[RMDB]
RNA sequence: GGGAACGACUCGAGUAGAGUCGAAAACAGGGUCAGUGGACUCACGACCUGAGCUACCUGUGGAGGUGUUAAACAGAAGAUCCAAAGGCAACUGUAAAAGUCACAUGGAAGGGCCUCAGGAUGUCUUUGGGCAUCCAGGUGCUGCUAAUGGACACACCUCAACACGACUAUUCGUAGUCGUGUUGAGAAAAGAAACAACAACAACAAC
Reactivity to DMS in 0.01 (KOAc 150mM, MgCl2 10mM, bicine 150mM(pH8.5), 24C), signal-to-noise 1, nucleotides 027 to 156: c060a090g000g100g000u000c020a120g000u010g040g010a160c080u000c010a080c010g010a110c010c040u010g030a060g020c010u000a090c020c010u020g000u010g010g020a060g000g010u020g000u000u010a050a190a180c060a130g030a130a280g000a180u000c000c020a060a080a040g030g070c010a040a100c050u000g000u000a050a090a030a080g010u000c010a060c020a200u000g040g000a120a050g010g000g030c010c020u000c070a090g090g010a070u000g030u010c000u000u000u000g070g020g030c000a010u000c010c010a060g000g010u000g000c010u000g010c000u000a060a160u000g020g000a000c020a100c000a150c100
Reactivity to 2A3 in 0.01 (KOAc 150mM, MgCl2 10mM, bicine 150mM(pH8.5), 24C), signal-to-noise 2, nucleotides 027 to 156: c050a040g050g040g010u020c030a100g050u090g070g120a140c070u090c200a010c030g070a060c010c000u030g020a000g020c030u050a070c040c010u090g000u080g050g040a020g020g030u060g000u110u150a100a090a000c040a030g070a130a000g040a110u010c030c000a060a000a010g010g000c030a060a030c070u070g050u170a070a080a040a030g020u000c030a030c020a160u070g040g050a040a070g050g000g010c000c000u010c060a010g000g020a050u010g030u000c010u120u140u210g100g020g010c000a000u010c000c000a010g000g020u070g110c010u000g000c030u070a070a060u050g020g000a000c030a000c000a020c030